[RMDB]
RNA sequence: GGGAACGACUCGAGUAGAGUCGAAAACUAACGAAUAAUAAAGUCAAAGGGCGUAGUUAUAGGGUAUGCCGGAUGAAUAAUCCAAUCUUCAUGUUGGCUUUCUAUUAGCAUUCCAACAUGAAUUUAUCGCCACAGUGUAUUUCGAUACACUGUGGCGAAAAGAAACAACAACAACAAC
Reactivity to 2A3 in 0.01 (KOAc 150mM, MgCl2 10mM, bicine 150mM(pH8.5), 24C), signal-to-noise 1, nucleotides 027 to 126: c010u040a080a210c160g080a000a010u180a170a040u140a090a110a000g030u020c090a050a030a000g130g010g000c050g080u080a000g070u070u010a130u070a090g140g100g080u000a010u070g050c060c000g000g060a020u000g000a000a040u200a080a020u060c110c000a020a000u000c000u000u000c000a000u020g000u000u000g020g010c140u020u000u090c030u040a230u190u090a090g000c040a040u000u040c000c000a000a000c000a000u000g000a000a000u000u000u100a250u000
An RNA of 177 nucleotides, treated with 2A3 and read out base by base. 2A3 adducts were read by reverse transcription with SuperScript II with manganese. Values cover nucleotides 27 to 126.